[RMDB]
RNA sequence: GGGAACGACUCGAGUAGAGUCGAAAACGAGGAAAGGUUAGGGUUGUAUUACUGGGAUACCAGAGAUCAAAAUCCAAAAAAUAAGGACUUUAUCUUAAAUUCAACACUAUGCAACUCAUGCGAAUGGUCCGUAGGAUUAGUUCGCUAAUCCUACGGAAAAAGAAACAACAACAACAAC
Reactivity to 2A3 in 0.01 (KOAc 150mM, MgCl2 10mM, bicine 150mM(pH8.5), 24C), signal-to-noise 2, nucleotides 027 to 126: c040g030a060g070g040a130a040a040g050g000u060u110a050g050g030g010u020u050g020u040a060u020u090a020c040u010g000g050g000a030u050a080c020c030a020g000a000g000a060u030c090a010a010a020a020u000c000c000a020a130a080a050a080a080u190a110a070g010g000a010c010u030u060u030a030u010c000u020u040a090a150a140u080u030c020a080a040c010a030c030u060a040u070g000c010a000a020c010u020c070a060u130g010c040g120a130a090u150g090g000
Reactivity to DMS in 0.01 (KOAc 150mM, MgCl2 10mM, bicine 150mM(pH8.5), 24C), signal-to-noise 4, nucleotides 027 to 126: c100g010a100g010g030a060a120a100g000g010u010u010a120g000g000g000u010u000g020u000a020u000u000a150c130u010g010g000g000a120u000a110c120c070a140g010a030g010a010u000c190a010a010a020a030u010c010c020a010a020a150a090a100a160u020a080a110g000g000a010c030u000u000u000a020u010c010u010u010a040a060a060u000u010c060a060a090c040a030c050u010a030u010g000c030a020a020c030u000c030a090u010g000c080g010a080a090u010g000g000